[RMDB]
RNA sequence: GGGAACGACUCGAGUAGAGUCGAAAAGAUACUUUCAGAUGGAAAUCUGAAAAUGUUUCCACUACUGAAGUAGAAGAUCAGUUGACGGCCAGUAACAAAGAACAAUAUGCACAAGUUCUAGUUGAAAAGUAAUCAGCUAUUUCGAUAGCUGAUUACUAAAAGAAACAACAACAACAAC
Reactivity to 2A3 in 0.01 (KOAc 150mM, MgCl2 10mM, bicine 150mM(pH8.5), 24C), signal-to-noise 7, nucleotides 027 to 126: g030a020u070a040c010u030u050u050c010a010g020a020u030g050g110a090a120a060u050c010u060g010a050a070a040a030u170g010u020u010u010c010c010a020c080u210a020c000u010g010a050a010g020u090a060g060a160a030g020a080u060c040a020g040u040u050g110a080c040g060g030c000c030a040g020u070a060a020c040a130a110a000g020a000a020c050a120a070u120a100u300g120c080a080c040a190a040g000u040u000c010u030a020g030u020u060g060a070a100a010
Reactivity to DMS in 0.01 (KOAc 150mM, MgCl2 10mM, bicine 150mM(pH8.5), 24C), signal-to-noise 4, nucleotides 027 to 126: g000a140u010a020c040u000u010u000c000a000g030a090u010g000g030a050a070a030u010c140u000g000a070a030a050a070u020g010u000u000u010c010c000a130c190u020a050c040u020g010a020a020g000u010a040g000a100a080g000a080u010c050a050g000u000u010g020a040c060g010g010c040c040a070g020u030a060a050c140a040a090a030g000a040a010c050a050a080u030a060u050g000c180a070c160a100a050g000u000u000c010u010a120g000u010u000g000a050a050a110